An RNA of 177 nucleotides, treated with DMS and 2A3 and read out base by base. For 2A3 the reverse transcriptase was SuperScript II with manganese. The DMS profile rests on 4,850 reads. Conditions: 150 mM KOAc, 10 mM MgCl2 and 150 mM bicine (pH 8.5), 24 C. It was measured as part of the RMDB library OK1LIB. For DMS the reverse transcriptase was MarathonRT. Reactivities are given for positions 27 through 126.
[RMDB]
RNA sequence: GGGAACGACUCGAGUAGAGUCGAAAAAUCUACUUCGGCCUGCCGCACCGCCAUGGCAUCAAUGCCGGCUUUAUCCCGAUGGUCAUUGGCGCGGGCAUGACCUCGGCGAUCAUGAACCCCUGCCGCCAUUAUGCCGCAGCUUCGGCUGCGGCAUAGUAAAAGAAACAACAACAACAAC
Reactivity to DMS in 0.01 (KOAc 150mM, MgCl2 10mM, bicine 150mM(pH8.5), 24C), signal-to-noise 3, nucleotides 027 to 126: a060u040c020u010a050c060u010u010c030g000g020c060c010u030g010c030c050g010c070a050c080c060g030c080c010a090u010g010g080c000a070u000c160a080a100u000g010c120c020g000g020c050u010u000u000a090u010c020c000c010g000a060u040g010g000u010c030a120u020u050g010g010c030g020c180g020g000g000c080a010u000g000a020c000c020u010c030g000g000c160g050a040u000c090a050u010g000a140a140c020c010c000c060u000g000c000c010g010c080c020
Reactivity to 2A3 in 0.01 (KOAc 150mM, MgCl2 10mM, bicine 150mM(pH8.5), 24C), signal-to-noise 3, nucleotides 027 to 126: a000u010c010u060a070c020u010u050c030g050g000c020c010u030g000c010c010g030c000a040c020c000g000c030c020a110u120g020g020c010a010u030c100a040a050u070g030c050c000g020g010c010u050u080u080a100u030c010c000c010g000a070u200g000g040u020c020a030u020u110g070g010c040g030c050g010g080g000c000a010u000g050a030c010c040u030c050g080g010c080g070a080u030c030a040u080g100a130a150c000c030c000c020u060g030c010c010g050c030c000